RNA sequence: GGGAACGACUCGAGUAGAGUCGAAAAAACACAGAUGAGAUAUUCUACACAUUAAUCUACUUAUCUGGAAUCACUUUGCCUCUAAAGGCCAGAGAAAAAUCACAGCUUCCUUGUCGGAGGGGAAAAGUCAAGUGUAGAUUUUCGAAUCUACACUUGAAAAAGAAACAACAACAACAAC
Reactivity to 2A3 in 0.01 (KOAc 150mM, MgCl2 10mM, bicine 150mM(pH8.5), 24C), signal-to-noise 9, nucleotides 027 to 126: a000a000c090a010c010a020g010a030u030g010a010g020a030u050a050u130u150c100u220a070c090a010c010a110u180u160a120a060u050c040u110a140c010u080u040a010u000c010u010g030g060a040a070u090c010a020c070u050u060u090g050c010c000u030c020u110a140a110a030g010g000c010c000a010g120a010g060a030a060a020a020a010u170c070a050c010a110g060c050u030u010c010c000u010u020g020u030c040g050g020a040g010g000g010g000a020a070a020a000g070
Reactivity to DMS in 0.01 (KOAc 150mM, MgCl2 10mM, bicine 150mM(pH8.5), 24C), signal-to-noise 6, nucleotides 027 to 126: a080a040c140a100c050a020g010a030u010g010a040g000a140u000a030u010u010c100u010a090c160a100c180a110u030u010a050a060u010c070u010a100c020u000u010a020u000c000u000g000g000a150a080u020c140a100c000u000u000u010g020c010c010u000c080u010a070a070a110g010g010c050c050a020g000a080g000a020a040a060a060a040u010c140a050c180a080g000c070u000u010c020c010u000u010g010u010c080g000g000a120g030g000g000g010a040a030a050a040g000
This 177-nucleotide RNA was probed chemically with 2A3 and DMS.
DMS adducts were read by reverse transcription with MarathonRT.
Values are in units of 0.01, from 0 to 300, in steps of 10.
Conditions: 150 mM KOAc, 10 mM MgCl2 and 150 mM bicine (pH 8.5), 24 C.
2A3 adducts were read by reverse transcription with SuperScript II with manganese.